[RMDB]
RNA sequence: GGGAACGACUCGAGUAGAGUCGAAAAAAAAAGAUAUGGAUCACAGAACUACAACCUGACAACGAAGAACUAAUAUCGGAAACGAUAUUAGGGAGUUGUACAGGUUGCUGUGAUCCUAAGUCAAAAAUCAUUAGUGGUACUUCGGUACCACUAAUGAAAAAGAAACAACAACAACAAC
Reactivity to DMS in 0.01 (KOAc 150mM, MgCl2 10mM, bicine 150mM(pH8.5), 24C), signal-to-noise 1, nucleotides 027 to 126: a050a120a090a120a190g000a000u000a070u020g000g000a000u000c000a010c000a010g000a110a010c100u010a300c000a000a010c000c000u020g010a040c000a020a000c000g020a080a110g010a080a140c000u000a000a000u000a000u000c000g000g000a040a000a040c000g000a020u000a000u000u000a000g000g000g000a020g020u000u000g000u000a140c010a000g010g000u000u000g000c010u000g010u000g020a000u000c000c010u000a000a020g000u020c000a010a080a100a120a130
Reactivity to 2A3 in 0.01 (KOAc 150mM, MgCl2 10mM, bicine 150mM(pH8.5), 24C), signal-to-noise 1, nucleotides 027 to 126: a030a020a000a000a000g060a010u030a020u060g020g010a000u020c000a010c030a040g120a080a060c150u300a140c300a000a000c010c000u010g050a000c000a020a000c040g300a300a110g000a030a040c000u000a000a000u020a000u000c020g000g020a010a000a000c010g000a000u010a000u010u000a000g010g090g000a040g020u000u020g030u010a270c000a010g000g020u010u000g010c000u010g000u030g040a000u030c000c000u000a010a010g020u000c020a020a050a020a030a240